RNA sequence: GGGAACGACUCGAGUAGAGUCGAAAAGAUGAUGAACAUGCGCUUAGGAUGCGAUUCCACAAACUUAGUCACAGCAUUAUUGCUUUCCUCAUUCGUGUUAGCACGAGCAAAUUGAACUUCGGGUUGCGAAUGGGAGGUAGCAAUCUGGUUCAAUGUAUGCGAAGUUGUACUUCGGUACAACUUCGCAAAAAGAAACAACAACAACAAC
Reactivity to 2A3 in 0.01 (KOAc 150mM, MgCl2 10mM, bicine 150mM(pH8.5), 24C), signal-to-noise 4, nucleotides 027 to 156: g050a040u140g000a000u040g020a050a030c040a130u060g000c040g000c050u070u100a040g020g030a040u070g020c080g160a160u130u040c020c020a040c050a080a070a020c030u080u090a030g090u120c030a010c020a090g000c010a050u020u040a020u080u150g020c000u000u050u020c000c010u030c020a080u110u020c010g010u010g060u160u230a050g110c020a010c040g010a020g030c060a020a140a140u030u050g010a030a010c010u180u130c080g010g000g010u030u030g000c010g050a110a090u120g050g030g030a020g000g020u010a020g000c000a000a020u010c000u030g010g030u030u020c000a030a040u070g070u120a070